[RMDB]
RNA sequence: GGGAACGACUCGAGUAGAGUCGAAAAGUAUGUUACGAUUAUGUGACUAGCCAUAAUCGAUGAAGGUACUCGACUUCAUCGUAACAUAGAAUUGUCAGUGCGUACUGGCUAGUCACAGUACGCCAGACUACACUCCUAGUCUGGCACUGACUAGGAGCAGCCCAGUAGCUUUCGAGCUACUGGGCUGAAAAGAAACAACAACAACAAC
Reactivity to 2A3 in 0.01 (KOAc 150mM, MgCl2 10mM, bicine 150mM(pH8.5), 24C), signal-to-noise 3, nucleotides 027 to 156: g060u050a030u140g090u080u060a030c040g010a070u060u040a030u270g020u000g000a000c000u000a000g030c010c030a150u180a050a090u040c040g000a000u050g100a040a050g030g020u090a040c050u020c050g040a030c010u020u000c010a000u020c010g000u010a000a000c000a020u060a040g190a210a130u160u130g020u060c060a030g030u050g180c020g000u020a050c010u000g000g000c000u000a010g000u000c000a010c000a000g000u000a000c000g020c010c000a040g010a020c020u080a030c020a010c030u000c000c000u000a000g000u010c020u020g110g000c010a010c050u000g000a020c000u000a020g000g010a000g000
Reactivity to DMS in 0.01 (KOAc 150mM, MgCl2 10mM, bicine 150mM(pH8.5), 24C), signal-to-noise 1, nucleotides 027 to 156: g050u010a050u000g030u020u020a040c030g020a100u010u000a080u030g020u000g000a010c020u010a040g020c040c000a080u000a140a050u000c020g000a060u010g020a020a020g010g000u000a150c240u000c060g000a130c010u000u000c040a090u000c000g000u010a010a060c040a010u000a100g010a110a160u000u040g010u000c040a160g010u010g030c040g010u000a070c110u010g000g010c000u000a010g030u000c010a050c000a000g020u000a090c000g000c030c030a080g020a050c030u000a110c100a110c080u000c020c020u000a000g010u000c020u010g030g020c050a020c040u000g020a040c010u020a020g000g010a070g030